Chemical mapping of a 177-nucleotide RNA with DMS and 2A3. The data come from the RNA Mapping Database (RMDB), library OK1LIB. For 2A3 the reverse transcriptase was SuperScript II with manganese.
RNA sequence: GGGAACGACUCGAGUAGAGUCGAAAAACGGGCAGUGGCGAUGGCAACGCGGCAGCCGCAGGGUCGACUUCUUCGCAGCCGCAACAGACGGGGUACGGGCAAAGAGGGGACCUCGUUCUGUUGGAAGUCAGUAUUAGCCUUUCGAGGCUAAUACUGAAAAAGAAACAACAACAACAAC
Reactivity to DMS in 0.01 (KOAc 150mM, MgCl2 10mM, bicine 150mM(pH8.5), 24C), signal-to-noise 4, nucleotides 027 to 126: a090c110g000g000g000c050a050g020u010g000g000c020g010a080u020g010g020c060a050a100c110g010c010g000g020c040a100g010c040c020g000c060a100g010g010g010u000c040g010a060c050u010u010c030u010u010c090g020c040a090g010c010c030g000c010a020a010c010a010g000a030c000g010g000g000g020u010a050c040g000g010g010c130a070a090a120g010a140g020g000g010g000a040c010c000u010c000g000u020u000c010u000g000u000u000g000g000a100a040g010
Reactivity to 2A3 in 0.01 (KOAc 150mM, MgCl2 10mM, bicine 150mM(pH8.5), 24C), signal-to-noise 9, nucleotides 027 to 126: a000c040g000g020g010c020a050g020u050g080g010c040g040a080u080g040g030c030a060a040c040g010c000g060g000c020a010g030c020c010g000c040a040g030g030g020u040c020g020a060c010u050u020c000u060u040c070g000c060a030g030c020c020g030c010a010a010c000a010g010a000c000g000g000g010g000u040a020c040g020g080g020c100a100a120a020g080a090g030g030g040g010a010c000c000u000c000g030u120u050c010u000g000u000u000g010g010a050a020g070